[RMDB]
RNA sequence: GGGAACGACUCGAGUAGAGUCGAAAAGAUAUGGACUGAGCUUUUGACGAUCGAGGGUCGGAAACGACCUUAACGAUCGAUAAGCUCUGUCCUAAGUCAAACAUGAUAACCUUCGGGUUAUCAUGAACUUAAACACGUGGUUCGCCACGUGUUUAAGAAAAGAAACAACAACAACAAC
Reactivity to 2A3 in 0.01 (KOAc 150mM, MgCl2 10mM, bicine 150mM(pH8.5), 24C), signal-to-noise 3, nucleotides 027 to 126: g030a020u030a050u130g000g010a010c010u020g000a020g030c030u000u120u180u230g270a200c090g010a000u000c010g000a070g020g010g000u000c010g020g040a020a030a040c010g000a010c060c000u000u000a120a070c010g000a000u000c010g010a000u010a000a010g000c000u010c010u000g010u000c010c000u010a080a000g060u030c030a070a060a070c010a010u010g000a000u000a000a000c010c000u030u100c300g140g000g000u010u000a000u010c000a000u000g010a000a010
Reactivity to DMS in 0.01 (KOAc 150mM, MgCl2 10mM, bicine 150mM(pH8.5), 24C), signal-to-noise 4, nucleotides 027 to 126: g010a030u000a300u020g000g010a010c010u000g000a000g000c010u000u000u010u000g020a220c140g000a010u000c010g040a090g000g000g010u010c010g010g000a080a080a190c020g010a030c000c000u000u000a050a130c010g010a010u000c000g000a060u010a000a010g000c000u000c000u010g000u000c000c010u010a010a100g020u000c040a110a090a300c010a000u000g000a010u000a000a000c000c000u000u010c200g020g010g020u000u000a010u000c000a000u000g000a050a160